[RMDB]
Description:
Chemical mapping of a 177-nucleotide RNA with 2A3 and DMS.

RNA sequence: GGGAACGACUCGAGUAGAGUCGAAAAGUGGCUAAGACGUUGAAAGAAGCAAACCUUGAUUUUGGUGUUGAAAUGUGUGAACCACAACCACCUUCAGAAGACUUUGCAUAUUAUGCUAAAGAACGUCCUGUGGUUAGGACUUCGGUCCUAACCACAGAAAAGAAACAACAACAACAAC
Reactivity to 2A3 in 0.01 (KOAc 150mM, MgCl2 10mM, bicine 150mM(pH8.5), 24C), signal-to-noise 2, nucleotides 027 to 126: g100u040g030g080c020u020a060a000g020a000c030g020u030u020g090a180a150a170g130a060a000g000c000a000a000a000c000c000u070u050g080a250u200u100u090u150g000g000u020g010u020u070g050a170a180a260u000g030u000g010u030g020a030a160c010c000a020c030a100a280c000c000a010c000c000u030u050c030a060g060a150a000g000a010c020u000u070u010g030c060a010u110a150u120u300a030u300g090c100u100a000a140a000g020a010a010c000g000u000c050
Reactivity to DMS in 0.01 (KOAc 150mM, MgCl2 10mM, bicine 150mM(pH8.5), 24C), signal-to-noise 1, nucleotides 027 to 126: g020u000g010g000c000u000a020a120g000a010c020g060u010u000g030a020a090a080g010a280a130g030c070a030a010a010c040c030u030u000g000a110u000u010u000u020g000g040u010g030u000u040g000a070a020a040u000g000u000g000u040g070a150a240c050c000a000c020a000a140c060c000a000c000c000u000u000c110a060g000a060a020g000a120c120u000u000u000g040c000a000u040a050u000u000a060u080g000c040u040a000a170a110g000a030a010c030g000u020c000

Notes:
For DMS the reverse transcriptase was MarathonRT.